Source: RMDB library TTRDES, as collected in RNAgym. Structure probing data (2A3 and DMS) for a 177-nucleotide construct. For 2A3 the reverse transcriptase was SuperScript II with manganese. The DMS profile rests on 7,568 reads. The reactions ran in a buffer of 150 mM KOAc, 10 mM MgCl2 and 150 mM bicine (pH 8.5), at 24 C.
RNA sequence: GGGAACGACUCGAGUAGAGUCGAAAAGAUAUGGAACCACACUCGCGAUAAGUCGUGGUCGGAAACGACCAUACGACUUUUGACGCGAGGGUGGUUCCUAAGUCAAAACGUCCGCUUCGGCGGACGAUCCCCCUAUAUGGUUCGCCAUAUAGGGGGAAAAAGAAACAACAACAACAAC
Reactivity to 2A3 in 0.01 (KOAc 150mM, MgCl2 10mM, bicine 150mM(pH8.5), 24C), signal-to-noise 4, nucleotides 027 to 126: g000a000u030a020u120g000g000a000a000c000c000a000c000a000c000u010c000g010c050g200a100u070a300a000g000u020c000g020u010g010g000u000c000g020g000a040a060a010c010g010a000c000c020a020u110a060c050g020a020c020u030u020u030u140g230a110c220g000c010g000a010g020g000g000u000g000g000u010u000c000c000u000a000a000g000u000c000a010a000a070a150c050g000u000c010c000g040c030u080u070c300g230g010c010g000g010a000c000g000a000
Reactivity to DMS in 0.01 (KOAc 150mM, MgCl2 10mM, bicine 150mM(pH8.5), 24C), signal-to-noise 5, nucleotides 027 to 126: g000a030u000a300u010g010g000a010a000c010c000a000c000a030c010u000c000g020c000g030a170u000a010a010g030u000c000g030u000g000g010u000c000g010g010a060a090a160c000g020a020c010c010a080u010a080c050g010a010c000u000u000u010u010g010a200c110g000c010g020a010g000g000g040u000g000g000u000u000c000c000u000a000a060g020u000c010a080a080a140a220c040g000u000c000c000g030c000u000u010c220g030g020c010g000g000a000c000g000a070